[RMDB]
RNA sequence: GGGAACGACUCGAGUAGAGUCGAAAAGAAAGAAGCCUCCCGACAGUUUUCCUGUGUUUUCUGGAGCUGCUGCUCAAGGCUUUCCCAGACCUGUGGAUUUACAGACAUACUGAGCUGCCUGGGGGAACGUAAUUCAAGAUUUCGAUCUUGAAUUACGAAAAGAAACAACAACAACAAC
Reactivity to DMS in 0.01 (KOAc 150mM, MgCl2 10mM, bicine 150mM(pH8.5), 24C), signal-to-noise 6, nucleotides 027 to 126: g010a130a120a210g010a160a150g000c060c020u010c040c050c020g010a120c060a050g000u010u010u040u000c060c030u000g010u010g010u010u000u020u010c020u010g010g010a050g010c050u010g000c090u010g000c050u000c040a100a070g010g000c040u000u000u000c000c010c010a140g000a080c150c010u000g000u000g010g010a110u010u020u020a090c060a060g010a120c120a090u020a110c100u010g010a070g000c040u010g010c020c010u000g010g000g000g000g020a080a160
Reactivity to 2A3 in 0.01 (KOAc 150mM, MgCl2 10mM, bicine 150mM(pH8.5), 24C), signal-to-noise 9, nucleotides 027 to 126: g070a000a110a010g080a040a010g050c000c010u010c030c020c000g020a030c010a020g010u030u060u140u110c020c010u060g020u020g080u130u080u100u090c050u040g010g010a020g010c030u080g020c030u040g010c010u040c060a040a030g000g000c000u040u020u020c020c010c000a040g040a180c010c010u060g020u090g080g060a130u050u070u180a060c020a020g060a030c010a030u170a090c040u090g030a020g030c010u020g020c020c010u020g000g000g010g010g020a050a040